[RMDB]
RNA sequence: GGGAACGACUCGAGUAGAGUCGAAAAAACAAGGUGCUAUCUUCCAUUCGUCUUCAGAUACUGAAGUCAUUAUGCAUUUGAUACGUCGAAGUAAAGCUCCUACUUUUGAGGAAGCAUUGAAAGAAAGCACAUCGCACAGUUUCGACUGUGCGAUGUGAAAAGAAACAACAACAACAAC
Reactivity to DMS in 0.01 (KOAc 150mM, MgCl2 10mM, bicine 150mM(pH8.5), 24C), signal-to-noise 2, nucleotides 027 to 126: a060a040c120a060a080g020g000u010g010c050u000a100u000c010u000u000c040c040a120u000u000c060g000u000c030u000u000c000a020g030a130u010a020c080u000g000a130a130g010u040c080a110u020u000a100u000g040c030a030u010u010u000g010a030u000a030c080g050u000c120g000a050a040g000u000a040a040a090g000c030u010c000c000u010a060c170u010u000u000u020g000a080g000g000a010a100g020c090a040u010u000g010a080a030a070g000a070a050a070g020
Reactivity to 2A3 in 0.01 (KOAc 150mM, MgCl2 10mM, bicine 150mM(pH8.5), 24C), signal-to-noise 2, nucleotides 027 to 126: a010a000c100a040a030g070g000u020g020c020u010a030u130c010u040u000c050c000a070u030u000c020g010u030c040u010u000c000a050g040a230u110a230c040u060g070a040a010g070u040c010a010u020u230a020u120g050c020a010u100u020u060g030a030u070a050c020g000u000c010g030a020a000g010u090a000a090a030g020c050u000c040c000u020a050c020u070u240u140u170g050a020g010g030a010a040g050c040a050u010u090g100a030a100a000g020a080a080a000g060